The record gives the reactivity of an RNA of 177 nucleotides to 2A3 and DMS. Reactivities are given for positions 27 through 126. The data come from the RNA Mapping Database (RMDB), library TTRDES. Values are in units of 0.01, from 0 to 300, in steps of 10.

RNA sequence: GGGAACGACUCGAGUAGAGUCGAAAAGAUAUGGAGCACCUGUGGAGACGUGAUCGGAAACGAUCAAACGUCGUUGAAACAGAUGCUCCUAAGUCAAAACUUACGGACCGUUCGCGGUCCGUAAGAAGAUCAAACUACGGUUCGCCGUAGUUUGAUCAAAAGAAACAACAACAACAAC
Reactivity to 2A3 in 0.01 (KOAc 150mM, MgCl2 10mM, bicine 150mM(pH8.5), 24C), signal-to-noise 1, nucleotides 027 to 126: g000a030u100a000u040g000g010a000g010c000a030c040c010u020g000u020g070g230a080g010a020c030g010u000g000a020u020c000g000g100a030a040a010c000g000a010u010c000a080a300a000c040g020u010c020g010u120u210g080a010a010a000c010a030g010a010u010g000c000u030c000c000u000a010a010g000u000c010a020a000a150a230c000u010u010a000c010g010g010a010c000c010g020u020u130c300g030c030g170g020u030c000c000g000u010a000a010g010a000a020
Reactivity to DMS in 0.01 (KOAc 150mM, MgCl2 10mM, bicine 150mM(pH8.5), 24C), signal-to-noise 2, nucleotides 027 to 126: g010a020u010a150u010g020g010a050g050c000a010c030c000u010g030u010g020g010a130g020a020c010g050u010g000a040u000c000g010g010a040a040a070c020g010a010u000c010a020a180a250c000g000u000c000g070u010u020g060a300a300a020c010a010g000a000u000g000c000u000c000c000u000a000a090g010u000c000a100a130a230a140c010u010u000a020c000g000g000a030c000c000g030u000u020c290g000c030g000g010u000c000c000g010u010a000a000g020a030a110